[RMDB]
RNA sequence: GGGAACGACUCGAGUAGAGUCGAAAAACCGGUACCGAAGCGUUGGCGUAUAUCGCACUUCUGGCCAUGUCCUCGUUGUGGCUUAUUAGCGAAAUAUCGGUUGUCGGUAUGCUAAUAUAUACGCAAAGGGUAUAACUUACUUCGGUAAGUUAUACCCAAAAGAAACAACAACAACAAC
Reactivity to 2A3 in 0.01 (KOAc 150mM, MgCl2 10mM, bicine 150mM(pH8.5), 24C), signal-to-noise 3, nucleotides 027 to 126: a010c040c000g070g040u130a130c060c030g010a100a010g020c080g110u100u090g060g000c000g010u000a010u030a010u110c070g010c010a090c070u050u080c050u110g010g000c010c010a090u150g060u060c020c030u140c110g080u040u110g040u030g000g030c030u040u080a000u010u070a000g010c030g040a080a100a110u060a010u030c030g010g130u130u110g300u300c000g030g020u010a000u050g000c010u040a000a000u050a040u030a010u000a020c010g000c000a080a140a110
Reactivity to DMS in 0.01 (KOAc 150mM, MgCl2 10mM, bicine 150mM(pH8.5), 24C), signal-to-noise 3, nucleotides 027 to 126: a120c040c020g000g000u000a090c080c040g000a060a070g020c060g010u010u010g040g000c020g000u000a020u000a030u010c050g040c080a150c120u020u000c100u020g000g000c000c030a040u020g000u010c040c080u000c170g010u000u010g020u000g000g010c030u020u010a030u000u010a000g010c010g000a080a200a070u000a000u000c050g010g010u050u030g000u020c020g010g000u000a000u020g000c000u000a000a020u010a040u020a010u010a010c020g000c010a110a100a170

Structure probing data (2A3 and DMS) for a 177-nucleotide construct. For DMS the reverse transcriptase was MarathonRT. Values cover nucleotides 27 to 126.